[RMDB]
RNA sequence: GGGAACGACUCGAGUAGAGUCGAAAAAGAUUCCGCUUGACACCAAUCCUAGGUGCAUAGUGUCUACGUGCUGCCGCUUUGCGGCCAACGGCAUUUUGCUGUUGGAUGCUAAUUCGUUGGCAUCAGUGCAGCAAAUGUCAUUCGUGACAUUUGCUGCAAAAGAAACAACAACAACAAC
Reactivity to DMS in 0.01 (KOAc 150mM, MgCl2 10mM, bicine 150mM(pH8.5), 24C), signal-to-noise 1, nucleotides 027 to 126: a060g000a150u000u010c040c050g030c020u000u040g000a130c010a030c010c010a040a110u020c040c030u000a060g060g010u050g000c050a050u020a040g030u010g010u010c060u010a070c270g030u000g020c020u050g020c000c000g010c050u000u010u020g020c000g020g020c030c020a000a020c030g000g020c000a180u010u010u050u000g010c000u000g000u030u050g000g000a010u000g000c000u010a040a020u010u030c110g000u000u000g000g000c000a010u000c000a030g020u000
Reactivity to 2A3 in 0.01 (KOAc 150mM, MgCl2 10mM, bicine 150mM(pH8.5), 24C), signal-to-noise 3, nucleotides 027 to 126: a000g160a030u050u020c020c000g000c010u000u010g000a020c000a000c010c010a050a050u090c000c040u070a060g140g000u060g020c030a060u060a050g020u030g130u090c050u050a050c030g040u130g040c040u030g020c000c000g000c090u040u100u230g010c020g020g000c000c030a010a020c010g010g030c000a020u030u150u120u270g040c030u010g000u040u000g030g000a000u010g030c000u020a010a070u130u160c160g070u020u060g000g010c040a040u000c010a040g060u070